[RMDB]
RNA sequence: GGGAACGACUCGAGUAGAGUCGAAAAGAUAUGGACCAACAUUCCAACAGCACGUCAUUCGGAAACGAAUGCGUGACAUGGAAGUUGGUCCUAAGUCAAAACACGUAACCCUUCGGGGUUACGUGAACAUGAUCCACGAGUUCGCUCGUGGAUCAUGAAAAGAAACAACAACAACAAC
Reactivity to DMS in 0.01 (KOAc 150mM, MgCl2 10mM, bicine 150mM(pH8.5), 24C), signal-to-noise 3, nucleotides 027 to 126: g000a010u010a050u030g010g010a030c000c000a010a000c000a230u000u000c000c010a140a170c300a260g000c000a010c000g000u020c000a000u010u000c000g040g000a010a020a020c000g000a020a000u000g000c010g000u000g000a030c130a100u020g030g010a010a030g000u000u010g000g010u000c010c000u000a000a000g000u000c010a100a080a140a260c000a000c010g000u000a010a010c000c000c000u000u030c170g020g010g010g010u010u000a000c000g020u000g000a040a140
Reactivity to 2A3 in 0.01 (KOAc 150mM, MgCl2 10mM, bicine 150mM(pH8.5), 24C), signal-to-noise 3, nucleotides 027 to 126: g010a000u010a010u070g000g010a010c000c000a010a000c030a300u000u000c020c020a230a090c160a300g030c000a030c020g290u300c090a020u000u000c010g000g000a010a020a000c000g010a010a000u010g020c010g010u000g020a040c060a090u210g000g000a000a000g000u010u000g020g000u000c000c000u000a000a000g020u020c000a000a000a080a090c010a000c000g000u000a000a000c000c010c000u030u070c300g070g010g000g000u000u000a020c010g000u000g000a010a000
The record gives the reactivity of an RNA of 177 nucleotides to DMS and 2A3. Source: RMDB library TTRDES, as collected in RNAgym. The 2A3 profile rests on 7,399 reads. 2A3 is a SHAPE reagent: it acylates the 2'-hydroxyl of flexible nucleotides of all four kinds.